Conditions: 150 mM KOAc, 10 mM MgCl2 and 150 mM bicine (pH 8.5), 24 C. An RNA of 177 nucleotides, treated with DMS and 2A3 and read out base by base. For 2A3 the reverse transcriptase was SuperScript II with manganese. DMS adducts were read by reverse transcription with MarathonRT. For 2A3, 666 sequencing reads were counted.
RNA sequence: GGGAACGACUCGAGUAGAGUCGAAAACUAUGUGGAAUCGGAAUUACUGCACUAUUUUAUGACCUAAUCCCCCCAUUUUGCUGUCAUUUUGUGGAGAACUUCCUGUUUUUACAUCCAUAUCUCAGCAUAAUUAGCAGUGGUUCGCCACUGCUAAUUAAAAAGAAACAACAACAACAAC
Reactivity to DMS in 0.01 (KOAc 150mM, MgCl2 10mM, bicine 150mM(pH8.5), 24C), signal-to-noise 3, nucleotides 027 to 126: c070u010a040u000g000u010g010g020a050a050u020c240g000g000a040a050u000u010a200c020u000g000c020a030c050u000a080u000u010u000u000a040u000g010a050c030c080u020a070a120u010c030c020c010c010c000c020a130u000u000u000u000g010c160u000g000u000c030a040u010u010u010u000g030u010g010g010a060g000a060a070c260u000u010c020c020u000g020u000u000u000u000u000a050c030a040u000c110c080a050u010a070u000c040u000c070a090g030c130a110
Reactivity to 2A3 in 0.01 (KOAc 150mM, MgCl2 10mM, bicine 150mM(pH8.5), 24C), signal-to-noise 1, nucleotides 027 to 126: c020u010a020u080g040u000g000g110a000a030u070c020g000g010a010a020u080u020a130c010u060g060c010a040c030u010a220u120u230u060u040a130u140g040a020c010c020u020a200a300u210c000c070c000c050c030c070a010u170u150u070u170g060c110u020g040u000c000a010u020u050u130u040g040u010g000g090a000g000a040a000c010u010u000c020c000u010g000u040u010u030u010u010a020c020a000u000c030c000a050u120a070u090c110u030c030a020g090c010a040